[RMDB]
RNA sequence: GGGAACGACUCGAGUAGAGUCGAAAAGAAGGUGUGUUCGCACACCUUCAAAUAGGUCAGACAAAAGCUUCCUGGAGUCAAGACCUGAAAACCAAAGGAGCAAAACCACCUACUUCGGUAGGUGGAAGAGUGCGGUAUAGUUCGCUAUACCGCACUCAAAAGAAACAACAACAACAAC
Reactivity to DMS in 0.01 (KOAc 150mM, MgCl2 10mM, bicine 150mM(pH8.5), 24C), signal-to-noise 1, nucleotides 027 to 126: g000a000a000g010g010u000g040u000g020u000u000c200g040c000a020c010a010c000c000u000u000c000a030a070a020u010a130g010g010u000c000a130g010a050c010a060a050a120a090g010c120u000u010c020c020u010g000g010a270g020u010c000a080a150g000a000c000c010u000g010a050a010a070a200c000c040a010a090a130g000g000a010g030c050a130a150a090a160c000c000a000c000c000u000a000c000u000u000c210g050g000u000a010g000g000u000g000g010a000a070
Reactivity to 2A3 in 0.01 (KOAc 150mM, MgCl2 10mM, bicine 150mM(pH8.5), 24C), signal-to-noise 2, nucleotides 027 to 126: g010a020a000g010g000u010g000u010g030u040u110c160g060c050a000c020a000c000c020u000u000c000a010a010a000u100a010g000g000u020c010a020g000a090c030a080a170a020a010g010c050u160u080c040c020u060g090g000a060g030u040c050a110a070g020a000c000c000u010g000a060a070a010a000c020c000a040a030a050g020g010a030g000c040a080a030a030a110c000c000a000c010c000u000a000c000u020u060c110g110g000u010a000g010g000u000g000g000a000a010
The record gives the reactivity of an RNA of 177 nucleotides to DMS and 2A3. The data come from the RNA Mapping Database (RMDB), library M2PK50. The DMS profile rests on 876 reads. The reactions ran in a buffer of 150 mM KOAc, 10 mM MgCl2 and 150 mM bicine (pH 8.5), at 24 C.